[RMDB]
RNA sequence: GGGAACGACUCGAGUAGAGUCGAAAAGAUAUGGAAGCAUGUGAGCAACAGCGUCGGGUCGGAAACGACCCAGACGACAUGCUCAGAUGCUUCCUAAGUCAAAGGUCACUACUUCGGUAGUGACCAAUCUUCCAACAUACUUCGGUAUGUUGGAAGAAAAAGAAACAACAACAACAAC
Reactivity to DMS in 0.01 (KOAc 150mM, MgCl2 10mM, bicine 150mM(pH8.5), 24C), signal-to-noise 2, nucleotides 027 to 126: g000a000u000a180u000g000g000a000a000g040c000a020u000g010u010g000a010g030c010a100a050c220a150g000c020g000u000c010g000g020g040u000c020g020g000a010a050a080c000g030a010c000c000c000a000g010a000c010g010a020c050a300u020g010c000u010c000a040g000a000u000g000c000u010u010c000c000u000a000a060g020u000c020a120a100a070g000g000u000c000a010c000u000a000c000u000u000c280g040g010u000a000g020u000g000a010c010c010a010a000
Reactivity to 2A3 in 0.01 (KOAc 150mM, MgCl2 10mM, bicine 150mM(pH8.5), 24C), signal-to-noise 1, nucleotides 027 to 126: g010a000u020a000u110g000g000a010a020g030c000a000u000g020u020g300a000g040c080a050a130c100a300g000c000g000u010c000g000g000g020u010c000g010g030a000a010a010c010g030a000c010c040c020a020g020a000c000g000a030c050a120u300g000c020u030c010a030g030a030u000g000c000u000u000c000c010u000a010a020g000u010c030a070a150a080g000g000u000c000a000c010u020a000c000u030u080c260g160g000u000a000g000u000g000a000c000c010a000a000
Source information
Source: RMDB library TTRDES, as collected in RNAgym. This 177-nucleotide RNA was probed chemically with DMS and 2A3. The 2A3 profile rests on 3,785 reads. Conditions: 150 mM KOAc, 10 mM MgCl2 and 150 mM bicine (pH 8.5), 24 C.